Chemical mapping of a 207-nucleotide RNA with 2A3.
RNA sequence: GGGAACGACUCGAGUAGAGUCGAAAAGUCUCCUAGAGAGCUUGGCCGUCGGGCCUUACACCCCGACUUGCUGAGUUUCUCUAGGAGAGUCCCUUUCCCAGCCAGAGCUGGCUGGUCAAACAAUACCAAAACUCUUGCUAGUUCGCUAGCAAGAGAACUCUUAAAAAUUGUUCGCAAUUUUUAAGAGAAAAGAAACAACAACAACAAC
Reactivity to 2A3 in 0.01 (KOAc 150mM, MgCl2 10mM, bicine 150mM(pH8.5), 24C), signal-to-noise 1, nucleotides 027 to 156: g000u020c000u000c000c000u030a010g000a000g010a000g000c010u020u040g010g010c000c000g010u000c000g010g000g030c040c000u050u100a060c070a020c000c030c000c000g020a000c010u040u300g000c000u010g020a010g000u030u210u020c000u030c000u000a000g000g000a000g000a000g000u010c000c000c000u020u050u010c030c010c010a000g000c010c010a080g020a090g300c300u020g020g040c000u000g010g070u000c030a030a130a090c040a040a140u180a300c050c090a040a100a130a160c000u010c000u000u000g000c000u000a010g020u030u020c130g000c120u010a000g000c010a000a010g000a000g000a000a000

For 2A3, 678 sequencing reads were counted.